The record gives the reactivity of an RNA of 177 nucleotides to DMS. For DMS, 2,605 sequencing reads were counted. The reactions ran in a buffer of 150 mM KOAc, 10 mM MgCl2 and 150 mM bicine (pH 8.5), at 24 C.
RNA sequence: GGGAACGACUCGAGUAGAGUCGAAAAGAUAUGGAAGUGUCGUACCGACCGAAGAACUAUGUCGUGGUUGGUAUCGGAAACGAUACCUCAUGACAUAGGGAGGUCAGGUACGACACUUCCUAAGUCAUCGAUCACCAUAGUUCGCUAUGGUGAUCGAAAAAGAAACAACAACAACAAC
Reactivity to DMS in 0.01 (KOAc 150mM, MgCl2 10mM, bicine 150mM(pH8.5), 24C), signal-to-noise 2, nucleotides 027 to 126: g000a040u000a300u000g010g000a030a010g010u000g020u000c000g020u020a000c010c010g020a020c010c000g000a150a150g010a130a200c000u000a010u000g000u000c010g030u000g000g010u010u010g040g010u000a000u000c000g000g000a140a120a220c030g000a000u000a000c000c010u000c010a000u000g000a020c000a000u000a010g000g010g000a100g020g010u000c000a060g040g000u000a000c010g000a010c010a000c000u000u000c000c010u020a010a110g000u000c030a180